Source information:
This 177-nucleotide RNA was probed chemically with DMS. High DMS reactivity at an A or C suggests that its Watson-Crick edge is free. DMS adducts were read by reverse transcription with MarathonRT. The data come from the RNA Mapping Database (RMDB), library TTRINS.
RNA sequence: GGGAACGACUCGAGUAGAGUCGAAAAGAUAUGGAUCGAGAUAGCUGCUCUUGGAUUUACAUGGGAGGAUGUAGUCGGAAACGACUACUGACUCCCAUGUUGUCAGAGCCGAAACGAUCCUAAGUCAUCGGUAAUACUCCUUCGGGAGUAUUACCGAAAAAGAAACAACAACAACAAC
Reactivity to DMS in 0.01 (KOAc 150mM, MgCl2 10mM, bicine 150mM(pH8.5), 24C), signal-to-noise 2, nucleotides 027 to 126: g020a040u010a300u000g010g040a000u000c010g010a050g000a100u000a220g010c240u000g000c000u010c020u040u040g040g020a000u000u000u000a000c000a000u000g000g010g040a010g000g000a260u000g010u000a000g000u000c000g000g000a090a140a300c000g040a020c010u000a000c000u010g000a300c010u000c000c000c000a000u000g010u000u000g000u010c010a050g000a030g010c050c080g020a110a130a160c010g000a020u010c010c000u030a020a100g030u000c040a110